An RNA of 177 nucleotides, treated with DMS and 2A3 and read out base by base. The RNA was probed in 150 mM KOAc, 10 mM MgCl2 and 150 mM bicine (pH 8.5) at 24 C. The data come from the RNA Mapping Database (RMDB), library TTRDES.
RNA sequence: GGGAACGACUCGAGUAGAGUCGAAAAGAUAUGGACCGCCGUAGGGAGCUGGCACUCGGAAACGAGUGGCAGCAUCGAUCUACACGGUCCUAAGUCAAAACUGACAGGGAGUUCGCUCCCUGUCAGAGCACAAAUUAGAGUUCGCUCUAAUUUGUGCAAAAGAAACAACAACAACAAC
Reactivity to DMS in 0.01 (KOAc 150mM, MgCl2 10mM, bicine 150mM(pH8.5), 24C), signal-to-noise 3, nucleotides 027 to 126: g010a020u000a100u000g000g000a000c010c010g020c280c180g050u000a010g010g040g010a170g020c000u000g000g000c000a000c000u010c000g000g010a020a010a060c000g000a020g020u000g000g020c000a000g030c010a080u020c300g000a140u000c000u000a000c000a180c000g000g000u000c000c010u000a000a070g000u000c000a120a070a130a210c010u000g010a010c000a000g010g000g010a020g010u010u010c290g020c000u000c000c000c000u000g000u000c000a000g010a100
Reactivity to 2A3 in 0.01 (KOAc 150mM, MgCl2 10mM, bicine 150mM(pH8.5), 24C), signal-to-noise 3, nucleotides 027 to 126: g010a000u030a010u050g000g000a000c020c000g140c140c170g020u000a000g040g150g120a170g050c010u000g160g060c010a010c000u000c010g010g040a020a010a000c010g000a000g030u000g030g080c000a000g000c000a010u110c050g050a220u000c000u000a010c010a000c030g010g000u000c000c000u000a010a000g000u000c000a010a020a160a220c020u000g000a010c010a000g000g030g000a010g000u080u190c270g120c150u020c000c010c010u000g000u000c010a000g000a000
2A3 adducts were read by reverse transcription with SuperScript II with manganese.